[RMDB]
RNA sequence: GGGAACGACUCGAGUAGAGUCGAAAAGGGGUCGAGCACUCCAAGAGGACAAGACAUGAGCUGAAGCCUCCACGGCUCAACAGCUUGUCUACCCACCUUGGAGACUCGACGGAGGCACCCAAACGAUUAUGUGAGCGUUCGCGCUCACAUAAUCGAAGAUACCAAAAGGGUUCGCCCUUUUGGUAUCAAAAGAAACAACAACAACAAC
Reactivity to DMS in 0.01 (KOAc 150mM, MgCl2 10mM, bicine 150mM(pH8.5), 24C), signal-to-noise 1, nucleotides 027 to 156: g000g000g070g070u000c000g040a020g000c010a290c010u010c010c000a070a020g000a300g050g030a010c010a060a020g000a030c060a300u000g020a000g080c000u000g010a080a120g000c010c010u010c030c080a290c150g020g030c010u000c000a090a090c040a000g000c010u000u020g030u000c010u000a070c060c020c190a300c050c010u000u000g010g000a020g000a100c000u000c030g030a050c000g030g030a050g010g000c030a110c010c040c100a070a110a250c000g000a020u010u030a000u020g030u000g000a050g070c000g020u000u010c300g020c000g010c020u010c000a000c000a000u010a000a010u000c010g020a020a070
Reactivity to 2A3 in 0.01 (KOAc 150mM, MgCl2 10mM, bicine 150mM(pH8.5), 24C), signal-to-noise 2, nucleotides 027 to 156: g010g010g030g010u000c000g000a010g020c110a080c270u010c000c000a000a000g020a010g030g000a000c000a020a010g010a020c050a160u190g030a010g000c020u020g030a120a000g010c000c000u010c050c030a060c050g000g000c000u000c030a040a100c040a020g110c010u000u000g000u000c000u070a110c060c070c010a060c010c000u000u010g000g010a030g010a020c000u000c000g010a010c000g000g000a010g000g000c030a040c000c000c000a030a080a030c010g000a000u010u000a000u000g010u000g000a000g010c010g010u080u130c280g070c010g000c080u000c000a000c000a000u000a000a000u000c000g000a000a010

Source: RMDB library RNAMAK, as collected in RNAgym. This 207-nucleotide RNA was probed chemically with DMS and 2A3. The reactions ran in a buffer of 150 mM KOAc, 10 mM MgCl2 and 150 mM bicine (pH 8.5), at 24 C. For 2A3, 2,525 sequencing reads were counted.